[RMDB]
Chemical mapping of a 177-nucleotide RNA with DMS. The DMS profile rests on 3,624 reads. Conditions: 150 mM KOAc, 10 mM MgCl2 and 150 mM bicine (pH 8.5), 24 C. Reactivities are rounded to 0.1 and cut off at 0 and 3.
RNA sequence: GGGAACGACUCGAGUAGAGUCGAAAAGAUAUGGAUUCCUCUGCGGUAGCGAUGAAAAAGCAAAACACGUACUUCGGAAACGAAGUACGUGUUUUGCUUUGGAGCUGCGCAGAGGGAAUCCUAAGUCCCUACUACUUAUCUUCGGAUAAGUAGUAGGAAAAGAAACAACAACAACAAC
Reactivity to DMS in 0.01 (KOAc 150mM, MgCl2 10mM, bicine 150mM(pH8.5), 24C), signal-to-noise 2, nucleotides 027 to 126: g000a150u010a270u010g000g000a010u000u010c000c000u000c000u000g010c000g010g050u010a000g030c000g000a130u010g040a080a080a010a010a010g030c000a030a010a000a030c010a030c000g050u000a000c000u010u020c010g030g000a100a070a240c010g040a060a010g010u000a020c000g040u000g000u000u000u000u000g000c000u000u000u000g030g000a090g010c000u000g020c010g030c010a010g010a030g020g020g000a010a000u000c000c000u000a080a140g010u000c040